About this RNA
This 177-nucleotide RNA was probed chemically with 2A3 and DMS. The DMS profile rests on 1,296 reads. Source: RMDB library RFM100, as collected in RNAgym. The RNA was probed in 150 mM KOAc, 10 mM MgCl2 and 150 mM bicine (pH 8.5) at 24 C.
[RMDB]
RNA sequence: GGGAACGACUCGAGUAGAGUCGAAAAAAAAGCACCGAAGAGGGCUUUCGGCGAUAUUGACAGGCAGCUGCAUUUGUGCCCGGAAAGCGCGAAGUGUAAUCAAUGAGUAAAGCAAAUCUCAAGCCAUCGCUUCUUUAUCAUUCGUGAUAAAGAAGCGAAAAGAAACAACAACAACAAC
Reactivity to 2A3 in 0.01 (KOAc 150mM, MgCl2 10mM, bicine 150mM(pH8.5), 24C), signal-to-noise 4, nucleotides 027 to 126: a000a000a000a000g060c020a040c040c010g000a080a010g060a010g040g030g000c000u030u000u000c040g060g000c020g030a050u040a090u150u160g080a090c050a030g050g030c020a030g040c040u020g000c020a010u010u070u140g020u060g020c000c000c000g090g090a070a030a020g030c060g000c010g040a030a020g030u030g030u170a070a020u140c120a040a100u100g030a010g060u070a040a140a000g070c030a040a100a130u040c010u000c020a010a010g030c030c000a030u010
Reactivity to DMS in 0.01 (KOAc 150mM, MgCl2 10mM, bicine 150mM(pH8.5), 24C), signal-to-noise 1, nucleotides 027 to 126: a090a070a000a000g070c110a000c010c000g000a080a070g020a180g000g000g050c060u000u000u060c030g000g020c170g000a100u030a080u010u030g000a120c110a070g000g000c060a040g060c000u000g010c010a070u000u000u010g030u000g000c020c000c030g000g000a130a120a070g000c010g000c000g030a020a040g010u000g000u000a030a100u030c100a040a030u000g000a090g010u040a130a100a030g000c080a130a050a060u000c000u000c010a050a120g010c130c120a080u000

Values cover nucleotides 27 to 126. The 2A3 profile rests on 2,855 reads.